[RMDB]
RNA sequence: GGGAACGACUCGAGUAGAGUCGAAAAUACCGCGUCUUCGGACGCGGUAAGAUCCCGUCGGAAAACCUGAGAGACGGAGAUGAAGAGACUCAAGCUACGCAUUGACUGCCGGAUUCGUCCGGCAGAAAACUCCUGAUUCAUUCGUGAAUCAGGAGUUAAAAGAAACAACAACAACAAC
Reactivity to DMS in 0.01 (KOAc 150mM, MgCl2 10mM, bicine 150mM(pH8.5), 24C), signal-to-noise 2, nucleotides 027 to 126: u000a030c000c020g060c000g030u000c000u000u000c170g030g030a000c010g010c020g000g000u010a000a050g010a150u000c020c000c000g020u000c070g010g000a120a020a080a090c050c030u000g000a220g010a160g000a050c050g000g000a080g000a040u010g010a080a130g000a100g010a070c040u010c060a090a080g000c030u000a060c160g020c090a110u000u000g000a220c000u020g000c000c000g020g000a030u000u020c170g010u000c000c000g010g020c000a010g000a020a050
Reactivity to 2A3 in 0.01 (KOAc 150mM, MgCl2 10mM, bicine 150mM(pH8.5), 24C), signal-to-noise 1, nucleotides 027 to 126: u050a010c020c010g050c010g020u000c060u030u110c270g070g000a000c030g000c020g000g010u010a010a000g000a010u000c010c000c000g050u030c030g060g100a100a110a060a100c020c090u090g040a060g010a000g020a140c030g080g000a090g000a020u110g110a070a020g050a010g040a050c020u060c090a010a050g060c050u140a020c090g030c080a090u020u180g050a040c000u010g000c020c000g000g000a010u030u020c050g100u060c050c000g000g000c020a000g000a000a010
Overview:
Chemical mapping of a 177-nucleotide RNA with DMS and 2A3. For DMS, 1,647 sequencing reads were counted. The 2A3 profile rests on 883 reads. The data come from the RNA Mapping Database (RMDB), library M2PK50. The RNA was probed in 150 mM KOAc, 10 mM MgCl2 and 150 mM bicine (pH 8.5) at 24 C.